[RMDB]
About this RNA:
An RNA of 207 nucleotides, treated with 2A3 and DMS and read out base by base. The reactions ran in a buffer of 150 mM KOAc, 10 mM MgCl2 and 150 mM bicine (pH 8.5), at 24 C. Values are in units of 0.01, from 0 to 300, in steps of 10. For 2A3 the reverse transcriptase was SuperScript II with manganese. Reactivities are given for positions 27 through 156.
RNA sequence: GGGAACGACUCGAGUAGAGUCGAAAAGAUGGAGAGCCUCCGGUAACUAAAGGCCCUAUACUUUGUUACUCUUUGCCCUGUACUGAGUAGAAAACCUGACUUGACUAUGGAGUUAAAAAUUUAAUUUGUAAUUAUCUACUGGAAAGAGCAGAGAAUACAUGUAAACAUCAUUCGUGAUGUUUACAUGAAAAGAAACAACAACAACAAC
Reactivity to 2A3 in 0.01 (KOAc 150mM, MgCl2 10mM, bicine 150mM(pH8.5), 24C), signal-to-noise 4, nucleotides 027 to 156: g050a040u060g010g010a070g000a030g070c010c020u000c030c030g040g080u070a110a070c060u100a120a070a150g030g010c030c020c030u070a070u050a100c020u080u080u100g010u080u030a030c010u020c000u080u040u040g030c000c010c000u000g010u020a040c020u050g100a000g030u040a030g050a030a090a000a010c000c000u040g050a080c020u060u070g020a030c020u060a130u200g050g030a040g040u040u050a050a070a080a120a170u130u190u160a120a100u100u110u110g010u010a030a080u050u060a020u070c010u040a060c010u020g000g010a070a080a010g020a030g030c010a000g010a010g020a060a020u110a100
Reactivity to DMS in 0.01 (KOAc 150mM, MgCl2 10mM, bicine 150mM(pH8.5), 24C), signal-to-noise 3, nucleotides 027 to 156: g020a180u000g010g000a120g020a070g000c010c010u000c020c010g010g010u010a060a130c050u010a090a090a060g020g000c010c020c030u000a110u000a090c030u000u010u020g010u000u000a050c030u000c040u010u000u000g000c010c020c020u000g010u000a210c080u000g010a100g030u000a040g000a060a080a090a110c050c040u010g020a100c050u000u000g010a110c060u000a110u010g020g010a060g020u000u000a040a050a100a050a110u000u000u000a030a130u000u020u010g000u000a050a060u000u000a100u010c010u000a010c030u010g020g000a060a090a080g010a060g010c000a050g010a070g020a060a080u000a180